[RMDB]
RNA sequence: GGGAACGACUCGAGUAGAGUCGAAAAGUGCAGACCCUCCGAUGGCGUCGAGGUGAUCUCCUGAUGCGGGUGCUCCUCACGAACGACGACGGGAUCGAGAGCCCGGGGUUGUGGGCCCUCCAUGAGGGCCCCCUAGAGGAUUCGUCCUCUAGGGGGCAAAAGAAACAACAACAACAAC
Reactivity to 2A3 in 0.01 (KOAc 150mM, MgCl2 10mM, bicine 150mM(pH8.5), 24C), signal-to-noise 4, nucleotides 027 to 126: g060u070g060c050a010g020a130c020c010c000u000c020c030g100a100u080g070g020c020g030u070c080g010a010g020g010u050g050a140u080c030u050c060c040u180g090a200u180g070c140g030g010g040u020g000c000u010c010c000u030c000a030c060g100a180a020c040g040a020c030g010a010c020g010g030g030a100u120c110g030a070g010a060g200c000c020c020g030g010g020g020u100u120g050u050g020g070g000c000c000c020u000c040c020a090u220g070a040g040g050
Reactivity to DMS in 0.01 (KOAc 150mM, MgCl2 10mM, bicine 150mM(pH8.5), 24C), signal-to-noise 9, nucleotides 027 to 126: g010u010g010c090a140g000a130c020c010c010u000c030c040g010a150u010g010g010c030g020u000c090g010a040g010g010u000g000a120u010c030u000c010c020u000g010a130u010g020c140g020g010g010u000g000c050u000c010c020u000c020a080c070g010a070a070c060g000a190c140g010a090c090g010g000g000a070u000c070g000a140g010a170g010c020c010c020g020g000g000g000u000u000g020u010g010g010g010c020c010c010u000c030c080a100u000g010a080g010g010

Structure probing data (2A3 and DMS) for a 177-nucleotide construct.
Conditions: 150 mM KOAc, 10 mM MgCl2 and 150 mM bicine (pH 8.5), 24 C.
Reactivities are given for positions 27 through 126.
Reactivities are rounded to 0.1 and cut off at 0 and 3.